[RMDB]
RNA sequence: GGGAACGACUCGAGUAGAGUCGAAAAAGUUAUGAGUUCGCUCAUAACUACAGGGAAAGGCGCUCGGACCCGCAGUCCGCCGAAGGCAUCCCAGCCUGUCCAAGUUGGUAUAUUUCGAUAUACCAAAGAUACUGGUAGGUUUCGACCUACCAGUAUCAAAAGAAACAACAACAACAAC
Reactivity to 2A3 in 0.01 (KOAc 150mM, MgCl2 10mM, bicine 150mM(pH8.5), 24C), signal-to-noise 2, nucleotides 027 to 126: a010g000u010u010a010u000g000a010g030u020u120c170g060c090u010c000a000u000a000a000c010u020a050c040a050g040g000g060a050a160a090g050g010c050g020c080u110c080g070g090a100c010c040c030g080c040a010g020u000c030c010g020c020c020g040a030a000g080g020c000a030u040c000c000c000a030g030c000c000u010g020u030c020c010a090a050g110u030u020g020g000u000a010u000a010u010u140u060c190g020a020u010a000u010a000c000c000a000a030a020
Reactivity to DMS in 0.01 (KOAc 150mM, MgCl2 10mM, bicine 150mM(pH8.5), 24C), signal-to-noise 3, nucleotides 027 to 126: a040g010u000u000a000u000g000a010g010u010u020c220g020c000u000c000a010u000a000a000c000u010a080c150a100g010g000g010a050a060a090g020g020c080g030c070u000c060g000g000a100c040c070c090g020c110a100g010u010c070c040g010c130c030g000a070a050g000g010c020a060u000c010c000c000a130g000c000c010u000g000u010c080c070a130a140g020u000u000g010g010u000a000u000a000u000u000u020c170g000a020u000a000u000a000c000c000a010a030a070